[RMDB]
RNA sequence: GGGAACGACUCGAGUAGAGUCGAAAACCGUGGUAUAUUUCAUUGGCGAGUGUGUGCGUGCGUGUGCUGUGGCAGCGGCUUUUUUGGCUGCGCUCGGCGUGUGUGCUGUGUGUGCUUGCUGGUGCCCCCCAUAAUACAUGUUCGCAUGUAUUAUGGGAAAAGAAACAACAACAACAAC
Reactivity to DMS in 0.01 (KOAc 150mM, MgCl2 10mM, bicine 150mM(pH8.5), 24C), signal-to-noise 2, nucleotides 027 to 126: c010c010g020u010g010g030u010a050u010a090u010u000u010c030a030u000u000g010g000c010g010a020g010u000g020u000g000u010g030c030g020u000g010c010g030u000g010u000g020c020u000g010u020g000g000c000a100g070c010g020g000c020u000u000u000u000u000u010g000g020c000u000g010c020g010c000u000c020g000g000c010g030u000g020u010g010u000g000c000u010g040u010g000u000g010u000g010c010u000u000g010c010u000g000g010u000g000c030c010c130
Reactivity to 2A3 in 0.01 (KOAc 150mM, MgCl2 10mM, bicine 150mM(pH8.5), 24C), signal-to-noise 6, nucleotides 027 to 126: c010c020g040u110g060g070u150a210u070a140u270u200u130c010a020u020u040g020g000c010g010a020g010u030g000u020g000u010g030c000g000u010g010c010g010u040g000u010g000c010u030g040u180g100g030c060a110g020c090g030g000c000u140u100u060u020u210u300g030g000c000u010g010c000g010c010u010c020g010g000c000g000u010g000u010g000u020g000c150u080g020u010g000u000g010u000g030c010u010u000g000c010u010g000g010u020g000c000c000c000
This 177-nucleotide RNA was probed chemically with DMS and 2A3.
The data come from the RNA Mapping Database (RMDB), library RFMREP.
Reactivities are given for positions 27 through 126.
As a SHAPE reagent, 2A3 marks flexible, mostly unpaired nucleotides at the ribose 2'-OH.
2A3 adducts were read by reverse transcription with SuperScript II with manganese.
The RNA was probed in 150 mM KOAc, 10 mM MgCl2 and 150 mM bicine (pH 8.5) at 24 C.
For 2A3, 13,259 sequencing reads were counted.